[RMDB]
RNA sequence: GGGAACGACUCGAGUAGAGUCGAAAAGUUGUCAGCGCAUUCGUGCGCUGACAACAAAAACCGUAGGAGCGCGACAUGCUCCACACUUCGAAAGAGGUGGAGAGCAACAGCGGCUCCUAAACGGAAAAACCAUUAUCCCAUUCGUGGGAUAAUGGAACAACACUUUAGUGUUCGCACUAAAGUGUUGAAAAGAAACAACAACAACAAC
Reactivity to DMS in 0.01 (KOAc 150mM, MgCl2 10mM, bicine 150mM(pH8.5), 24C), signal-to-noise 1, nucleotides 027 to 156: g000u000u010g020u000c010a010g000c080g160c000a120u000u000c300g090u000g120c000g070c040u010g000a030c020a010a050c020a040a110a060a070a180c010c020g050u000a110g010g000a040g050c030g010c050g050a200c140a300u000g000c000u000c030c010a100c000a000c000u020u000c000g020a070a140a280g020a080g010g020u010g000g020a120g040a080g000c010a060a090c100a120g010c000g030g000c010u000c000c000u020a000a010a090c030g020g010a010a070a100a110a140c000c010a000u000u000a060u010c000c000c000a110u000u000c230g070u000g020g020g020a010u000a000a000u010g000g020a060a050
Reactivity to 2A3 in 0.01 (KOAc 150mM, MgCl2 10mM, bicine 150mM(pH8.5), 24C), signal-to-noise 2, nucleotides 027 to 156: g010u000u020g010u000c030a020g040c010g030c120a140u110u180c300g100u060g000c020g000c000u000g000a000c010a000a000c020a010a000a000a000a000c000c000g000u000a000g000g020a000g000c080g000c050g230a170c070a090u090g000c000u030c030c000a010c000a000c000u010u000c020g150a280a140a120g010a010g000g000u010g000g020a070g010a010g060c020a000a060c030a150g030c010g160g010c000u010c000c000u010a010a040a000c000g000g050a140a050a000a000a000c020c000a020u000u000a000u000c000c000c000a010u040u110c270g080u050g020g000g000a000u010a000a000u000g000g010a000a000
Description
Structure probing data (DMS and 2A3) for a 207-nucleotide construct. Values cover nucleotides 27 to 156. The reactions ran in a buffer of 150 mM KOAc, 10 mM MgCl2 and 150 mM bicine (pH 8.5), at 24 C. DMS adducts were read by reverse transcription with MarathonRT.